Record summary: An RNA of 177 nucleotides, treated with DMS and 2A3 and read out base by base. Source: RMDB libraries RFM100 and RFMREP, as collected in RNAgym.
[RMDB]
RNA sequence: GGGAACGACUCGAGUAGAGUCGAAAAAACGGUAAUUCAAUUUAGUACGAGAGGAACCGUUGAUUCAGAUAAUUGGUUUUUGCGGCUGUCUGACCAGGCAGUGCCGCGAAGCUACCAUCUGCCGGAUAAUAAUUAUUCGAUUCGUCGAAUAAUUAUUAAAAGAAACAACAACAACAAC
Reactivity to DMS in 0.01 (KOAc 150mM, MgCl2 10mM, bicine 150mM(pH8.5), 24C), signal-to-noise 9, nucleotides 027 to 126: a020a010c010g000g010u010a040a110u050u000c020a090a100u020u020u020a120g020u020a130c180g010a230g000a140g000g000a300a050c040c050g010u000u000g000a140u010u010c030a020g010a020u000a080a140u020u010g010g000u000u010u000u000u010g020c000g000g000c000u000g010u000c000u000g010a150c300c280a040g010g000c000a010g000u030g010c010c000g010c010g000a000a010g000c030u000a050c300c100a030u000c010u000g010c080c020g000g000a190u010
Reactivity to 2A3 in 0.01 (KOAc 150mM, MgCl2 10mM, bicine 150mM(pH8.5), 24C), signal-to-noise 9, nucleotides 027 to 126: a000a000c030g010g010u070a050a040u050u010c040a020a060u060u140u170a200g080u170a100c130g050a070g010a020g170g070a040a040c000c000g000u000u010g020a060u060u050c010a000g010a020u040a070a100u190u110g020g030u050u080u020u040u190g000c000g000g000c010u010g000u010c010u030g150a240c080c040a010g000g000c010a020g040u050g200c010c000g000c000g000a000a000g010c030u020a020c010c020a010u000c000u010g040c020c020g030g010a010u030